[RMDB]
RNA sequence: GGGAACGACUCGAGUAGAGUCGAAAAUUAAAAAAAGACGUGACGGUGGCCUUGGCGGAACUGGCGGGCGAAUCGCCCUUUAAAUUGAUUUUUCUCGACCCCCCGUAUGCGAAGGAGCAACUCGCCGCGCAUGACUAAAUUUCGAUUUAGUCAUGCGAAAAGAAACAACAACAACAAC
Reactivity to DMS in 0.01 (KOAc 150mM, MgCl2 10mM, bicine 150mM(pH8.5), 24C), signal-to-noise 1, nucleotides 027 to 126: u000u020a000a030a070a110a070a120a100g020a130c110g010u010g000a070c030g020g000u000g000g000c010c030u000u000g050g050c010g000g000a080a050c070u010g010g040c130g020g000g060c100g010a040a040u010c090g000c050c000c010u000u000u000a020a110a090u010u010g010a110u010u000u000u010u000c010u010c040g020a300c070c020c000c030c000c020g020u010a040u020g000c100g000a060a020g010g020a110g000c070a070a070c100u000c040g000c050c090g010